[RMDB]
RNA sequence: GGGAACGACUCGAGUAGAGUCGAAAAGAAUUGGUAUGUAAGCUACUUCUUCCAGUAGCUGCGUCAUAACAUCAAGGUUAUGCAUACUGAGCCGAAGCUCAGCUUCGGUUCUCCAAGGAAGACCAAAUACAGCUCAGCCCGUUCGCGGGCUGAGCAAGAUUCACACUGUGUUCGCACAGUGUGAAUCAAAAGAAACAACAACAACAAC
Reactivity to DMS in 0.01 (KOAc 150mM, MgCl2 10mM, bicine 150mM(pH8.5), 24C), signal-to-noise 1, nucleotides 027 to 156: g000a150a180u010u000g000g010u000a040u000g090u010a300a300g000c000u000a000c060u000u000c000u020u000c130c070a300g010u010a040g020c000u000g000c000g020u000c060a000u000a000a040c020a300u010c240a120a090g010g000u000u000a000u010g010c000a030u000a020c020u000g060a180g000c010c040g010a060a070g020c060u010c190a140g030c000u000u000c000g000g000u000u000c000u000c010c040a130a180g040g000a040a070g020a300c100c050a040a070a140u010a050c070a280g030c020u000c000a010g000c000c000c020g000u000u020c290g010c020g120g000g000c000u000g010a000g000c000a000a010
Reactivity to 2A3 in 0.01 (KOAc 150mM, MgCl2 10mM, bicine 150mM(pH8.5), 24C), signal-to-noise 2, nucleotides 027 to 156: g120a010a090u020u020g000g000u000a010u000g000u000a000a010g000c000u000a000c010u070u100c000u000u010c010c000a000g000u000a000g000c000u000g000c000g000u000c000a000u000a000a020c020a070u230c180a170a010g300g000u000u000a000u000g010c010a010u000a000c000u000g010a000g000c000c000g010a000a000g030c020u070c300a030g020c000u010u000c000g010g010u010u000c010u000c030c020a090a080g000g010a000a000g010a010c060c070a030a050a030u150a120c090a020g010c000u000c020a000g000c010c010c010g030u120u150c160g050c010g080g000g030c000u000g000a000g000c000a000a000